[RMDB]
RNA sequence: GGGAACGACUCGAGUAGAGUCGAAAACUUAUCCGGUUUUAACGCUGUUUUAUUGGCGCAAAGGUUUACGGAUAAACAACUAAUAAUUAAACCUUUUGUGUGCGAAACGUGGUUGGUUAACGUACUCACUGCCCCCAGGGAUUCGUCCCUGGGGGAACAGAGCGUGUGAAUUCGUUCACACGCUCUGAAAAGAAACAACAACAACAAC
Reactivity to 2A3 in 0.01 (KOAc 150mM, MgCl2 10mM, bicine 150mM(pH8.5), 24C), signal-to-noise 1, nucleotides 027 to 156: c020u000u000a000u010c010c040g010g060u020u000u020u040a110a030c010g030c010u000g240u160u030u140u260a130u170u300g030g010c030g040c060a060a000a020g020g000u000u000u000a000c000g010g000a020u070a070a030a000c020a000a060c050u130a070a110u120a170a030u180u120a020a000a010c000c000u000u010u060u070g030u010g000u000g000c020g010a050a050a050c040g000u080g070g000u110u100g020g030u040u100a070a020c000g010u010a010c060u000c080a100c050u080g000c000c000c000c000c000a000g000g010g000a000u020u050c170g020u010c040c000c000u000g000g000g020g000g000a000a000
This 207-nucleotide RNA was probed chemically with 2A3. For 2A3, 544 sequencing reads were counted. The reactions ran in a buffer of 150 mM KOAc, 10 mM MgCl2 and 150 mM bicine (pH 8.5), at 24 C.